Source: RMDB library OK2TRN, as collected in RNAgym. The record gives the reactivity of an RNA of 177 nucleotides to DMS and 2A3. The 2A3 profile rests on 758 reads. The RNA was probed in 150 mM KOAc, 10 mM MgCl2 and 150 mM bicine (pH 8.5) at 24 C.
RNA sequence: GGGAACGACUCGAGUAGAGUCGAAAAUCAGUAAGAGUACUAACUUAACAUAUCGAGCCUGAUAAGCAACAUGUGGCUUUGCUACAGUAGUCUCUACGGUAAUUUAACACUAGUGCCACAUUAGGUGGCUCUCUGGUUGGUUCGCCAACCAGAGAGCAAAAGAAACAACAACAACAAC
Reactivity to DMS in 0.01 (KOAc 150mM, MgCl2 10mM, bicine 150mM(pH8.5), 24C), signal-to-noise 2, nucleotides 027 to 126: u020c030a100g010u000a060a110g030a020g040u010a000c060u010a060a150c050u010u010a080a120c020a020u010a060u000c010g000a200g010c010c030u030g030a120u010a130a100g020c000a020a130c300a060u000g030u000g000g020c070u010u000u000g010c050u000a100c270a040g020u000a040g020u000c040u010c010u010a020c000g000g000u020a070a080u000u010u030a110a200c100a030c070u000a050g000u010g030c020c020a020c030a090u010u010a060g030g000u010g000
Reactivity to 2A3 in 0.01 (KOAc 150mM, MgCl2 10mM, bicine 150mM(pH8.5), 24C), signal-to-noise 1, nucleotides 027 to 126: u090c040a010g040u070a260a000g010a000g040u050a030c030u050a230a060c000u130u060a080a030c020a110u130a020u180c020g020a000g060c010c020u000g060a070u060a240a050g040c050a050a000c000a120u060g010u010g040g000c000u150u100u050g000c030u070a060c000a080g000u030a000g030u080c000u000c010u090a020c020g000g000u020a080a200u040u200u210a080a000c000a030c050u010a030g040u010g090c010c030a010c020a010u080u030a140g040g010u000g000